[RMDB]
RNA sequence: GGGAACGACUCGAGUAGAGUCGAAAAGUGGUAUCGGGACAGGUAGGGAUAUUAAGCUAUCCGUUACGGAUAUUAUAUGUCUAUUUCUUCGCGGAUUAAUCAAGGAAGCGGAAAGUGAGACAGGAAAAACCGUGACUUCAGCAGUGGUAACCGUUCCCUGUAGGAUUCUAUUCGUAGAAUCCUACAGAAAAGAAACAACAACAACAAC
Reactivity to 2A3 in 0.01 (KOAc 150mM, MgCl2 10mM, bicine 150mM(pH8.5), 24C), signal-to-noise 6, nucleotides 027 to 156: g040u040g030g020u060a060u130c060g010g020g050a030c030a070g010g090u090a030g020g030g030a020u050a060u140u160a090a020g020c020u030a020u050c040c020g010u020u040a010c010g000g010a020u010a050u250u120a100u060a040u120g030u000c020u010a040u030u060u000c080u050u070c030g000c020g010g040a030u020u220a090a100u220c100a100a090g090g010a040a020g010c000g020g030a030a000a000g040u070g100a030g010a030c030a010g080g020a050a090a020a010a000c020c010g000u020g030a010c000u060u060c140a020g000c020a040g050u020g090g010u060a050a030c040c020g000u020u010c000c000
Reactivity to DMS in 0.01 (KOAc 150mM, MgCl2 10mM, bicine 150mM(pH8.5), 24C), signal-to-noise 3, nucleotides 027 to 156: g030u010g000g010u000a050u010c050g020g030g020a090c070a060g030g020u000a060g010g010g010a100u010a050u010u000a030a140g000c090u000a020u000c050c070g040u000u010a060c050g020g010a050u000a020u000u000a120u020a110u000g020u000c010u000a130u000u000u010c090u000u000c050g030c050g020g030a300u000u000a050a080u000c120a070a130g010g030a090a250g000c010g020g000a010a020a070g000u000g000a060g020a080c030a060g020g000a020a080a080a090a100c010c000g000u000g010a060c020u000u000c090a070g020c060a090g030u000g020g030u010a090a030c040c000g020u000u000c020c030